An RNA of 177 nucleotides, treated with 2A3 and DMS and read out base by base.
Source: RMDB libraries RFM100 and RFMREP, as collected in RNAgym.
For 2A3 the reverse transcriptase was SuperScript II with manganese.
[RMDB]
RNA sequence: GGGAACGACUCGAGUAGAGUCGAAAAGCCGUAAACUAUGCCAACUGGGUGUUACGUAGUGGUACCCACGAGAAAUCAAGUAUAUGGGCUAUGGGGAUAGUACGAUCGCAAGAUUGAAACUUGAAGACUUCUUAGACCUAUUCGUAGGUCUAAGAAGAAAAGAAACAACAACAACAAC
Reactivity to 2A3 in 0.01 (KOAc 150mM, MgCl2 10mM, bicine 150mM(pH8.5), 24C), signal-to-noise 9, nucleotides 027 to 126: g020c000c000g040u060a050a050a040c040u050a030u160g070c010c010a050a050c070u040g010g030g010u040g030u060u020a100c180g140u150a070g030u070g060g010u030a020c010c010c000a030c040g090a070g100a060a080a030u100c030a070a000g060u030a060u030a050u260g080g020g000c020u000a090u070g060g000g010g020a010u010a040g040u040a060c040g020a030u040c020g010c080a070a030g010a040u030u100g030a140a060a020c010u030u040g050a050a010g060a060
Reactivity to DMS in 0.01 (KOAc 150mM, MgCl2 10mM, bicine 150mM(pH8.5), 24C), signal-to-noise 9, nucleotides 027 to 126: g010c010c010g030u010a030a060a050c030u000a040u020g010c160c020a050a300c300u000g000g000g020u000g010u000u000a040c030g020u020a090g020u000g010g010u000a030c010c010c000a010c060g010a300g010a060a090a080u010c050a050a060g010u000a040u010a030u010g000g010g010c020u000a060u010g000g010g000g000a100u000a040g010u000a090c060g000a020u000c010g000c190a080a070g010a040u000u010g000a070a060a050c030u000u000g000a110a120g000a150